[RMDB]
RNA sequence: GGGAACGACUCGAGUAGAGUCGAAAAGAUAUGGACCCAUGUGUGGGAGAGACCAUGAUCGGAAACGAUCACAUUUCUCGACGAUCACACCGCUGGGUCCUAAGUCAAACCCAUCUUCGGAUGGGAACUCAAUGCUAAGGUUCGCCUUAGCAUUGAGAAAAGAAACAACAACAACAAC
Reactivity to DMS in 0.01 (KOAc 150mM, MgCl2 10mM, bicine 150mM(pH8.5), 24C), signal-to-noise 4, nucleotides 027 to 126: g000a050u000a300u010g000g000a020c000c000c010a030u020g010u000g010u010g010g010g020a020g000a020g010a050c300c300a170u000g000a000u000c010g010g000a140a100a220c010g000a030u000c010a020c250a300u010u000u000c000u010c000g000a070c290g000a100u010c010a000c000a010c000c130g000c080u000g000g020g030u000c010c000u000a000a060g010u010c040a080a150a130c000c000c000a020u000c010u000u010c150g020g000a000u000g000g000g010a020a070
Reactivity to 2A3 in 0.01 (KOAc 150mM, MgCl2 10mM, bicine 150mM(pH8.5), 24C), signal-to-noise 4, nucleotides 027 to 126: g030a010u070a050u190g000g000a000c000c000c010a040u200g010u000g000u000g020g020g000a040g010a000g000a000c060c050a130u060g000a000u000c000g010g010a040a070a030c010g010a010u020c000a000c010a110u110u230u030c000u040c000g300a300c000g010a030u010c010a000c000a010c010c020g010c050u030g020g010g000u010c000c000u010a010a000g000u020c010a020a020a160c000c010c000a010u000c010u040u090c300g210g010a000u000g000g010g020a000a020